RNA sequence: GGGAACGACUCGAGUAGAGUCGAAAAAUUAAAUAACAUCAAGUAACAUCUGUAUCAGGCCCUACAUAGAACAUACAGUUGAGUGGGAGUAAACAAAAAGAUAAACAUGCGUGUUAAUGGCUGUUCGAGAGAAAUCGGAAUAAAAGCCUAAACAGGAAUACUAACACUUUUUCGAAAGUGUUAGUAUAAAAGAAACAACAACAACAAC
Reactivity to 2A3 in 0.01 (KOAc 150mM, MgCl2 10mM, bicine 150mM(pH8.5), 24C), signal-to-noise 3, nucleotides 027 to 156: a000u100u100a020a000a070u130a070a020c030a020u140c050a020a030g050u070a080a060c010a070u090c060u100g050u040a060u080c060a050g060g050c010c010c020u030a040c010a050u140a020g100a050a000c010a030u140a010c000a070g020u040u030g040a030g040u050g020g040g020a050g040u090a030a050a070c070a030a060a010a050a010g090a080u120a030a130a010c010a010u150g030c060g100u070g040u030u100a080a080u070g010g020c010u010g020u060u030c070g000a010g000a010g040a100a080a110u020c010g020g000a020a010u120a100a200a020a000g000c000c000u030a000a020a000c030a020g020g050a030
Reactivity to DMS in 0.01 (KOAc 150mM, MgCl2 10mM, bicine 150mM(pH8.5), 24C), signal-to-noise 3, nucleotides 027 to 156: a180u010u010a070a060a090u000a060a130c030a080u000c040a100a140g050u000a090a100c040a050u000c020u000g020u000a070u000c020a160g020g030c020c030c010u000a100c090a180u010a090g010a080a060c030a060u020a070c030a070g010u000u000g000a120g040u010g000g010g000a110g030u000a020a070a120c060a010a040a060a130a100g010a110u000a090a040a100c090a050u000g020c030g020u010g000u000u010a110a070u000g010g050c000u000g020u000u000c010g000a100g000a160g020a050a110a160u000c020g000g010a030a070u000a090a030a050a020g000c000c000u000a050a020a060c060a040g020g010a100
Structure probing data (2A3 and DMS) for a 207-nucleotide construct. The reactions ran in a buffer of 150 mM KOAc, 10 mM MgCl2 and 150 mM bicine (pH 8.5), at 24 C. Reactivities are given for positions 27 through 156.